The record gives the reactivity of an RNA of 177 nucleotides to 2A3 and DMS. It was measured as part of the RMDB library OK2TST. DMS adducts were read by reverse transcription with MarathonRT. Conditions: 150 mM KOAc, 10 mM MgCl2 and 150 mM bicine (pH 8.5), 24 C. The 2A3 profile rests on 9,019 reads. Reactivities are given for positions 27 through 126.
RNA sequence: GGGAACGACUCGAGUAGAGUCGAAAACGAUACGCCGACGUUCCUCGCCGAGCAUACGGACGUCGUCGUGUCCCACCAGUGGGAGAACCCGCUCAACUACUUCUAUUUCGACGUGUGCUGGCAGGGAGCAAAAUAAUCAGUUCGCUGAUUAUUUUGCAAAAGAAACAACAACAACAAC
Reactivity to 2A3 in 0.01 (KOAc 150mM, MgCl2 10mM, bicine 150mM(pH8.5), 24C), signal-to-noise 6, nucleotides 027 to 126: c040g010a020u020a070c010g000c010c010g020a000c000g020u070u050c020c000u030c040g060c050c050g120a060g020c040a040u050a120c040g040g020a020c000g010u010c000g000u000c010g010u010g050u030c020c010c000a050c030c020a020g010u060g010g030g020a200g090a220a230c010c000c010g030c020u060c030a100a100c040u170a060c020u130u120c040u120a200u120u170u130c080g060a040c020g020u030g020u040g020c020u010g000g000c010a020g060g030g010a100
Reactivity to DMS in 0.01 (KOAc 150mM, MgCl2 10mM, bicine 150mM(pH8.5), 24C), signal-to-noise 5, nucleotides 027 to 126: c230g010a060u000a010c020g000c040c000g010a060c010g000u010u000c010c040u010c160g020c070c060g010a060g050c070a060u000a080c100g010g010a050c010g020u000c030g000u000c000g010u000g010u000c000c040c070a160c100c100a070g020u000g010g000g000a190g000a100a130c020c010c020g000c040u000c090a090a100c100u010a070c060u000u000c060u000a130u000u000u000c070g010a060c040g010u000g040u010g030c010u000g000g000c010a100g010g000g010a150